An RNA of 207 nucleotides, treated with 2A3 and DMS and read out base by base. Values cover nucleotides 27 to 156. The DMS profile rests on 3,593 reads. The data come from the RNA Mapping Database (RMDB), library RNAMAK. Conditions: 150 mM KOAc, 10 mM MgCl2 and 150 mM bicine (pH 8.5), 24 C.
RNA sequence: GGGAACGACUCGAGUAGAGUCGAAAAGUGGAAUUCGUUCCACAAAAAACCGUAGGACGCUCACAACGUGAGAGCUUGGAUUUACAUCCUUCGAAAGAGGGAUGUUGUCAGCUCUCUGUGAGGCGUCCUAAACGGAAAAAAUCCGGUUCGCCGGAAAACAAGUAGGUUAGUUCGCUAACCUACUUGUAAAAGAAACAACAACAACAAC
Reactivity to 2A3 in 0.01 (KOAc 150mM, MgCl2 10mM, bicine 150mM(pH8.5), 24C), signal-to-noise 3, nucleotides 027 to 156: g010u000g010g030a020a040u140u050c250g040u090u030c020c010a020c040a010a130a000a010a000a030c010c000g020u020a010g000g000a000c000g000c010u040c020a040c020a090a220c210g200u190g080a010g010a000g000c030u090u170g130g000a010u070u030u080a000c000a000u000c000c010u010u000c020g100a180a080a090g000a010g000g010g000a010u000g000u000u010g000u000c000a000g000c000u000c000u000c000u000g010u000g010a030g040g040c000g000u000c000c000u000a000a000a000c000g040g100a030a070a020a000a090a030u070c000c000g000g010u040u030c200g020c050c000g010g040a010a070a000
Reactivity to DMS in 0.01 (KOAc 150mM, MgCl2 10mM, bicine 150mM(pH8.5), 24C), signal-to-noise 2, nucleotides 027 to 156: g060u000g020g010a030a070u020u000c300g050u000u000c050c020a040c020a010a030a050a080a050a060c000c000g040u010a040g000g000a030c010g040c010u040c040a100c040a150a110c130g060u000g020a010g010a010g010c000u000u000g040g050a030u000u010u000a050c010a000u000c000c010u000u000c010g000a210a150a270g030a030g000g000g000a020u000g020u000u000g010u010c000a060g000c000u000c010u010c000u000g010u000g020a300g010g010c000g020u000c000c010u000a000a020a080c010g020g000a000a000a060a090a070a090u000c000c030g030g010u000u000c200g060c000c010g000g000a000a030a120